RNA sequence: GGGAACGACUCGAGUAGAGUCGAAAAGAUGUUGUGAUGAGGGCAAAAUGUUCAACUGCUCUGAAUGGGCUGAAUGAAAGUAGCCUUUCUGAACAUCAAAAGACAAUGGUCGUUCGCGACCAUUGUCGCUUUAACAAAUGUUCGCAUUUGUUAAAGCAAAAGAAACAACAACAACAAC
Reactivity to 2A3 in 0.01 (KOAc 150mM, MgCl2 10mM, bicine 150mM(pH8.5), 24C), signal-to-noise 7, nucleotides 027 to 126: g020a030u070g000u040u020g100u060g070a070u040g010a030g010g000g000c020a020a020a040a080u060g010u010u000c040a130a110c130u090g020c010u000c040u060g250a210a130u200g000g000g000c020u020g040a040a030u120g150a040a010a030g060u020a010g000c000c000u020u130u020c000u020g040a000a000c000a010u010c000a010a070a030a070g000a000c000a000a000u000g000g000u000c000g010u030u050c130g010c010g060a000c000c000a000u000u000g000u000c010
Reactivity to DMS in 0.01 (KOAc 150mM, MgCl2 10mM, bicine 150mM(pH8.5), 24C), signal-to-noise 8, nucleotides 027 to 126: g010a030u000g010u000u010g020u010g010a140u010g010a030g010g000g010c010a020a080a170a180u000g000u000u000c010a060a160c200u010g010c010u000c010u000g010a130a110u010g010g000g030c000u000g000a050a030u000g000a020a010a070g010u000a130g000c000c000u000u000u000c030u000g000a060a010c000a010u000c020a080a070a070a130g000a010c000a000a000u000g000g010u000c000g030u000u000c200g020c010g010a000c000c000a000u000u000g000u000c010